[RMDB]
RNA sequence: GGGAACGACUCGAGUAGAGUCGAAAAGAUAUGGACCGAAGUCAGGCAACAGCUAUACGUCGGAAACGACGUGAUAGACAUGCCUGUCACGGUCCUAAGUCAAAAUCCUCGCCUUCGGGCGAGGAAACCAUCUUUUAGGCUUCGGCCUAAAAGAUGGAAAAGAAACAACAACAACAAC
Reactivity to 2A3 in 0.01 (KOAc 150mM, MgCl2 10mM, bicine 150mM(pH8.5), 24C), signal-to-noise 2, nucleotides 027 to 126: g010a000u030a020u070g010g000a010c010c010g040a180a040g060u040c010a010g000g000c120a300a070c080a300g010c000u030a020u010a030c000g020u010c010g060g000a050a030a000c020g020a000c000g010u050g060a000u030a000g000a060c100a210u300g000c030c000u000g010u020c020a020c030g010g010u000c000c000u000a020a000g010u000c030a030a000a000a300u010c010c000u000c000g020c000c000u060u110c300g110g020g000c000g000a000g000g040a000a000a000
Reactivity to DMS in 0.01 (KOAc 150mM, MgCl2 10mM, bicine 150mM(pH8.5), 24C), signal-to-noise 2, nucleotides 027 to 126: g020a000u000a240u000g000g010a010c000c010g000a110a270g050u000c000a000g040g010c000a100a100c300a220g040c010u000a020u000a020c010g030u030c000g010g000a100a060a120c010g010a010c010g000u000g010a020u000a000g020a040c050a300u000g000c010c000u000g030u010c030a200c020g030g000u000c000c010u000a000a050g000u000c040a150a120a110a100u020c000c000u000c010g000c000c000u010u010c210g020g010g000c000g000a020g000g000a000a010a090
About this RNA
An RNA of 177 nucleotides, treated with 2A3 and DMS and read out base by base. As a SHAPE reagent, 2A3 marks flexible, mostly unpaired nucleotides at the ribose 2'-OH. The 2A3 profile rests on 3,566 reads. The RNA was probed in 150 mM KOAc, 10 mM MgCl2 and 150 mM bicine (pH 8.5) at 24 C.